[RMDB]
RNA sequence: GGGAACGACUCGAGUAGAGUCGAAAACGGAUUCGACAUGUGUAGGUGAGCGUGAAUUGCACUUCGUAGGUUACGUCUGCGUUAACAACGUUACAGUUAAUUAUAACUGCAAACAAUAACAAUUCUUACGCUGUAGCUGCCUAAACACCAGCAUAGCCUCGUUUCGCUCGUUCGCGAGCGAAACGAGAAAAGAAACAACAACAACAAC
Reactivity to 2A3 in 0.01 (KOAc 150mM, MgCl2 10mM, bicine 150mM(pH8.5), 24C), signal-to-noise 2, nucleotides 027 to 156: c070g000g160a030u110u090c070g040a030c060a080u090g010u040g000u130a020g080g010u030g030a010g040c020g030u010g090a100a020u140u200g010c040a040c050u050u010c090g000u000a000g000g000u080u000a000c050g040u070c000u030g000c040g110u020u120a000a000c000a000a000c010g000u010u010a020c000a000g040u000u000a040a090u280u010a300u080a300a000c000u010g090c060a080a200a000c060a140a050u250a090a000c120a090a100u100u020c000u060u050a070c090g010c030u040g000u080a050g030c030u030g010c010c000u030a010a010a010c000a000c000c020a010g010c000a050u040a040g010c000

Chemical mapping of a 207-nucleotide RNA with 2A3. The 2A3 profile rests on 514 reads.